RNA sequence: GGGAACGACUCGAGUAGAGUCGAAAAUCGGUGCUGCUUAUUUGAACCUAGUUGCAGAAUGGUCGGUGUAUUAGUGUUGAAUAGGGUAACGCUCCUUUUUGGAACGUGCUGAGGUGAGUGGCAGCGAGCCUGGCUGCAAUUUCGAUUGCAGCCAGGCAAAAGAAACAACAACAACAAC
Reactivity to DMS in 0.01 (KOAc 150mM, MgCl2 10mM, bicine 150mM(pH8.5), 24C), signal-to-noise 2, nucleotides 027 to 126: u000c040g010g000u000g040c020u000g000c020u000u010a020u020u020u020g000a100a090c020c000u000a060g000u010u030g000c020a100g000a090a080u010g040g030u020c050g000g010u000g000u030a030u010u010a110g020u000g000u000u000g000a080a090u060a070g000g020g000u020a080a050c050g000c080u000c000c000u000u000u010u020u030g030g000a010a010c000g040u000g010c030u030g010a080g050g000u000g010a020g000u000g000g010c000a000g000c030g040a090
Reactivity to 2A3 in 0.01 (KOAc 150mM, MgCl2 10mM, bicine 150mM(pH8.5), 24C), signal-to-noise 2, nucleotides 027 to 126: u010c000g000g000u000g000c000u000g000c000u010u020a000u000u070u120g050a040a000c010c010u030a070g000u010u000g070c050a010g050a190a060u160g080g050u100c050g000g020u030g000u020a030u010u090a020g030u000g010u110u070g020a160a060u170a080g090g000g010u040a020a020c020g010c000u100c010c000u040u290u030u230u280g050g000a000a000c030g000u010g070c030u000g020a030g000g070u020g000a000g000u000g010g000c050a000g040c000g000a000

This 177-nucleotide RNA was probed chemically with DMS and 2A3. Source: RMDB library OK1LIB, as collected in RNAgym. In probing experiments dimethyl sulfate is read out at A N1 and C N3, which are open when not base-paired. DMS adducts were read by reverse transcription with MarathonRT.